An RNA of 177 nucleotides, treated with DMS and 2A3 and read out base by base.
For 2A3, 1,348 sequencing reads were counted.
The reactions ran in a buffer of 150 mM KOAc, 10 mM MgCl2 and 150 mM bicine (pH 8.5), at 24 C.
Source: RMDB library OK2TRN, as collected in RNAgym.
RNA sequence: GGGAACGACUCGAGUAGAGUCGAAAAAUGCUCGACGGCGCCGCGCGCCGGCUGCGCGCACGCGGCAUCGCCGCGAGCAGUCUGCAAUGGGGCCUGUGGAGCGUGGCCGGUCCGCUCGACGACGCCACCCGUAGGAUAUGUUCGCAUAUCCUACGGGAAAAGAAACAACAACAACAAC
Reactivity to DMS in 0.01 (KOAc 150mM, MgCl2 10mM, bicine 150mM(pH8.5), 24C), signal-to-noise 1, nucleotides 027 to 126: a070u010g000c030u000c010g000a090c030g000g000c000g030c000c010g000c060g000c060g040c030c040g030g010c160u000g020c080g010c180g070c000a020c020g030c000g030g030c220a020u030c140g020c000c010g020c040g000a020g020c010a020g010u000c020u000g010c030a080a120u020g030g030g000g000c080c010u010g020u000g010g000a140g010c010g050u000g000g000c050c020g010g000u000c110c050g030c000u000c040g000a060c030g000a070c050g000c020c060a130
Reactivity to 2A3 in 0.01 (KOAc 150mM, MgCl2 10mM, bicine 150mM(pH8.5), 24C), signal-to-noise 1, nucleotides 027 to 126: a000u070g030c030u030c040g240a220c100g110g000c040g000c000c020g000c000g040c030g010c030c000g040g000c040u070g020c070g000c000g000c000a010c040g060c020g050g000c040a150u180c170g000c010c000g000c000g000a000g000c000a000g030u000c000u070g070c120a080a300u150g000g030g000g100c020c010u100g040u080g070g000a110g000c020g000u020g030g020c020c020g000g000u050c030c030g010c020u040c000g040a040c000g010a030c040g060c000c020a040